The record gives the reactivity of an RNA of 177 nucleotides to 2A3 and DMS. Reactivities are rounded to 0.1 and cut off at 0 and 3. The reactions ran in a buffer of 150 mM KOAc, 10 mM MgCl2 and 150 mM bicine (pH 8.5), at 24 C.
[RMDB]
RNA sequence: GGGAACGACUCGAGUAGAGUCGAAAAGAUAUGGACGAUGCCUUGUCAGCUCGCGCAUCGGAAACGAUGCUGAUUGAGCUUGGAUUUAGGCCGCUCGUCCUAAGUCAAACUGAGCUUCGGCUCAGAACGUAGUGCAUAGCUUCGGCUAUGCACUACGAAAAGAAACAACAACAACAAC
Reactivity to 2A3 in 0.01 (KOAc 150mM, MgCl2 10mM, bicine 150mM(pH8.5), 24C), signal-to-noise 3, nucleotides 027 to 126: g020a040u130a060u130g000g000a000c000g000a040u300g000c000c000u000u020g010u000c010a010g000c030u000c000g000c000g000c020a010u000c000g040g050a060a060a010c010g010a000u000g010c130u150g100a300u140u300g000a010g000c000u030u150g060g000a030u300u230u170a000g000g010c010c020g000c010u000c010g010u020c020c010u050a140a010g030u000c070a070a090a150c020u000g000a000g020c000u060u110c300g090g000c000u010c000a010g010a060a020
Reactivity to DMS in 0.01 (KOAc 150mM, MgCl2 10mM, bicine 150mM(pH8.5), 24C), signal-to-noise 2, nucleotides 027 to 126: g020a020u000a300u000g000g000a000c000g030a000u000g000c010c000u000u010g000u000c010a090g000c010u010c000g030c040g000c000a020u000c000g020g000a100a090a210c000g010a000u000g000c000u040g020a080u020u010g050a010g000c010u010u020g020g000a030u000u020u000a000g010g010c000c060g000c040u000c020g000u010c000c010u010a000a080g020u000c040a180a140a210c020u000g000a010g020c010u000u040c220g020g000c000u000c010a010g000a080a120
DMS (dimethyl sulfate) methylates the pairing face of unpaired adenines and cytosines. For DMS the reverse transcriptase was MarathonRT. 2A3 adducts were read by reverse transcription with SuperScript II with manganese.